RNA sequence: GGGAACGACUCGAGUAGAGUCGAAAAAGGCUAUUAACGCAGAAUGUGAAGACCCACGACUCAACUGCAGGCUUGCAGCCGAUACGAGCAAGCUGUAAGAGCAUAAUUGAGAAUGCACAGCGGACGCAAUAUAAUAUAUAUUCGUAUAUAUUAUAUUAAAAGAAACAACAACAACAAC
Reactivity to DMS in 0.01 (KOAc 150mM, MgCl2 10mM, bicine 150mM(pH8.5), 24C), signal-to-noise 2, nucleotides 027 to 126: a060g000g010c040u000a100u030u040a040a070c060g010c010a090g010a100a070u020g020u010g010a080a120g020a080c010c010c030a160c070g000a080c050u000c030a060a040c060u000g000c040a140g010g020c010u030u000g040c020a070g000c070c040g000a080u050a050c160g000a110g010c070a220a060g000c000u000g000u000a050a050g010a090g000c010a030u000a060a100u020u020g000a080g000a100a050u030g020c050a030c040a030g010c060g010g020a030c100g000c080
Reactivity to 2A3 in 0.01 (KOAc 150mM, MgCl2 10mM, bicine 150mM(pH8.5), 24C), signal-to-noise 3, nucleotides 027 to 126: a000g170g000c080u140a110u240u130a260a020c040g020c010a020g070a220a100u140g050u040g080a060a020g080a080c030c000c000a060c040g040a030c010u010c040a010a030c020u020g000c010a040g160g160c000u010u040g000c010a000g000c010c020g060a040u130a170c040g010a040g080c050a040a000g000c000u030g000u030a030a040g010a000g010c000a010u030a060a030u140u060g010a010g020a060a040u090g020c010a000c010a020g030c020g030g040a010c010g000c040
An RNA of 177 nucleotides, treated with DMS and 2A3 and read out base by base.
Reactivities are given for positions 27 through 126.
The RNA was probed in 150 mM KOAc, 10 mM MgCl2 and 150 mM bicine (pH 8.5) at 24 C.